[RMDB]
RNA sequence: GGGAACGACUCGAGUAGAGUCGAAAAAGAAAGAAAAAUAACGGCGAAAACGUGCGGAAGAAUACGCACGAAAAGAAGACUGGAUAGCGACGGAGAGGUCGCAACGCCGAAUAAUCCAGAAAAAAAACAGUAGUUACAGAUUCGUCUGUAACUACUGAAAAGAAACAACAACAACAAC
Reactivity to 2A3 in 0.01 (KOAc 150mM, MgCl2 10mM, bicine 150mM(pH8.5), 24C), signal-to-noise 2, nucleotides 027 to 126: a000g120a010a050a020g070a010a170a010a030a010u120a080a040c020g000g010c010g040a020a020a010a080c010g010u020g040c010g030g020a140a010g100a200a130u190a150c010g000c000a000c010g020a010a030a000a000g090a030a020g050a020c010u000g000g000a010u020a010g000c010g000a000c020g090g080a100g000a020g190g010u000c000g000c020a010a050c020g000c000c000g050a040a030u070a010a000u000c020c010a000g000a120a030a010a010a000a010a000a000
Reactivity to DMS in 0.01 (KOAc 150mM, MgCl2 10mM, bicine 150mM(pH8.5), 24C), signal-to-noise 2, nucleotides 027 to 126: a110g020a090a060a080g000a040a050a070a110a020u010a070a090c010g000g000c010g040a160a080a090a140c030g040u000g000c030g020g000a080a150g030a170a130u010a050c020g010c000a010c000g000a010a030a110a070g010a070a070g010a140c010u000g000g000a020u000a080g010c000g010a010c010g010g010a160g000a100g000g000u000c000g000c020a060a050c040g010c030c000g000a070a050u010a040a030u000c010c000a010g040a000a000a000a070a050a080a050a140